The record gives the reactivity of an RNA of 177 nucleotides to 2A3 and DMS.
The data come from the RNA Mapping Database (RMDB), library M2PK50.
For DMS, 3,851 sequencing reads were counted.
The reactions ran in a buffer of 150 mM KOAc, 10 mM MgCl2 and 150 mM bicine (pH 8.5), at 24 C.

RNA sequence: GGGAACGACUCGAGUAGAGUCGAAAAGUUUCAUCCUUCGGGAUGAAACAAAUAAAGUGACGCUCGCGCGUCAGUGGCAUCGAGUAGGUCGAGCCGCCUACAAAAUCGACGGGUUCGCCCGUCGAAAGACCGUAUUAAGGUUCGCCUUAAUACGGUCAAAAGAAACAACAACAACAAC
Reactivity to 2A3 in 0.01 (KOAc 150mM, MgCl2 10mM, bicine 150mM(pH8.5), 24C), signal-to-noise 4, nucleotides 027 to 126: g000u000u000u000c000a000u010c000c010u020u060c230g110g000g000a000u020g000a000a000a000c000a000a020a000u110a010a070a010g110u020g010a000c010g000c020u080c090g180c060g000c000g050u010c000a000g050u050g040g010c050a200u050c130g020a020g040u090a060g100g190u040c040g030a030g030c030c020g000c000c000u040a060c040a020a080a010a120u010c000g000a000c000g020g000g000u040u030c200g040c040c010c000g000u000c000g000a000a000a000
Reactivity to DMS in 0.01 (KOAc 150mM, MgCl2 10mM, bicine 150mM(pH8.5), 24C), signal-to-noise 4, nucleotides 027 to 126: g010u000u000u000c000a010u010c010c010u000u020c220g020g020g020a000u000g000a000a000a000c000a040a070a060u000a060a090a120g000u000g000a020c010g000c000u000c300g010c300g000c000g020u000c000a030g010u010g030g000c070a110u000c100g000a070g010u010a050g010g020u000c020g010a120g010c000c020g000c010c010u000a030c070a090a060a090a120u000c010g000a010c010g000g000g010u000u020c230g020c000c000c010g010u000c000g000a010a020a080